[RMDB]
RNA sequence: GGGAACGACUCGAGUAGAGUCGAAAAGCAGUUUCACUCACGAUAGACUCUUGAGGAAGAGUGUCAGUAUAGCUUCCUCAAGCUAUACAUUACGGUAUGCCAAUACUGUAAUUGACAGCAGAUUGGCAUCUGCUCUAUCUCAUGAAACUGGUGAGUCGCAUCGCAUAGGAUUCGUCCUAUGCGAUGCAAAAGAAACAACAACAACAAC
Reactivity to 2A3 in 0.01 (KOAc 150mM, MgCl2 10mM, bicine 150mM(pH8.5), 24C), signal-to-noise 4, nucleotides 027 to 156: g080c020a000g000u000u010u010c020a030c020u080c000a030c040g080a150u060a070g040a080c010u000c010u050u060g100a030g090g100a050a030g020a000g010u070g080u100c050a010g000u010a020u030a030g000c010u060u050c030c030u110c090a010a000g010c000u010a010u000a010c050a060u020u150a040c030g030g010u120a000u010g120c030c020a040a010u080a210c020u020g020u050a080a170u100u160g110a050c060a020g020c000a000g020a020u040u070g090g010c020a000u000c000u020g000c000u010c000u010a040u050c000u000c030a010u030g010a020a040a020c010u010g090g030u060g030a020g050u090c050